[RMDB]
RNA sequence: GGGAACGACUCGAGUAGAGUCGAAAAGUGCGGAGUGAAAUUCAUAGGAGCCUCGCCACUAUGGCUGAACGCCGCGGUACUCCGCGUAGUCGCGACGUAAACGUUCUGUGUUUGCGUUCAGGCCUCACGAUACCCGCACUUUCGAGUGCGGGUAUCGAAAAGAAACAACAACAACAAC
Reactivity to DMS in 0.01 (KOAc 150mM, MgCl2 10mM, bicine 150mM(pH8.5), 24C), signal-to-noise 1, nucleotides 027 to 126: g070u000g000c000g000g000a090g010u020g000a140a030a040u030u010c020a110u000a020g020g000a120g010c000c080u000c090g000c000c000a120c200u010a010u050g000g010c050u050g050a050a050c070g050c020c090g000c070g000g000u040a050c180u010c100c020g000c000g050u050a030g010u000c030g000c120g030a050c000g000u000a030a070a020c010g000u040u000c160u080g010u000g030u000u000u000g030c020g010u000u000c060a130g010g050c030c010u030c140a210
Reactivity to 2A3 in 0.01 (KOAc 150mM, MgCl2 10mM, bicine 150mM(pH8.5), 24C), signal-to-noise 2, nucleotides 027 to 126: g110u070g030c020g000g030a030g000u100g090a100a240a270u080u130c100a150u170a140g030g000a010g010c000c030u040c040g090c040c010a100c150u170a030u150g020g010c000u030g000a030a000c010g000c020c000g000c070g000g020u100a090c050u060c050c010g000c000g000u010a040g070u050c020g000c000g060a020c000g000u010a010a010a010c020g060u280u000c150u120g140u030g020u040u090u090g000c000g010u040u000c030a010g000g060c010c030u060c000a100